Chemical mapping of a 177-nucleotide RNA with DMS and 2A3. The RNA was probed in 150 mM KOAc, 10 mM MgCl2 and 150 mM bicine (pH 8.5) at 24 C. The 2A3 profile rests on 3,539 reads. 2A3 adducts were read by reverse transcription with SuperScript II with manganese.
RNA sequence: GGGAACGACUCGAGUAGAGUCGAAAAAGUGCGGGUACUGCAACUACGGGUACAGAUGGUUCGGCGUCUGUGACUGUAUCACUUACCACUCCUGGUACGUAUGACUUUCAGGCGUCUUUCGCGGGUGCCCCAGUCACUUAUUCGUAAGUGACUGGGGAAAAGAAACAACAACAACAAC
Reactivity to DMS in 0.01 (KOAc 150mM, MgCl2 10mM, bicine 150mM(pH8.5), 24C), signal-to-noise 2, nucleotides 027 to 126: a060g000u020g030c070g000g000g010u000a050c040u000g000c050a080a110c080u010a080c080g040g010g010u020a040c080a050g010a240u020g000g000u020u020c090g010g000c030g030u000c030u000g010u000g010a030c110u010g010u010a010u000c070a100c080u000u010a090c040c010a020c120u050c160c170u000g000g020u020a020c020g000u040a010u020g010a070c100u040u000u000c040a020g010g010c020g010u000c020u000u010u000c040g020c070g000g020g030u010g020
Reactivity to 2A3 in 0.01 (KOAc 150mM, MgCl2 10mM, bicine 150mM(pH8.5), 24C), signal-to-noise 5, nucleotides 027 to 126: a010g130u130g020c040g000g020g040u060a080c050u070g050c040a070a030c020u080a020c030g050g000g000u030a060c040a020g030a080u080g040g100u090u090c060g060g030c010g030u020c020u000g050u020g040a030c020u040g040u060a050u100c010a000c030u030u070a030c010c000a060c050u070c020c090u030g010g030u040a030c020g070u070a060u140g130a130c020u030u100u040c030a020g030g000c020g010u010c030u030u050u030c070g000c040g020g050g010u050g050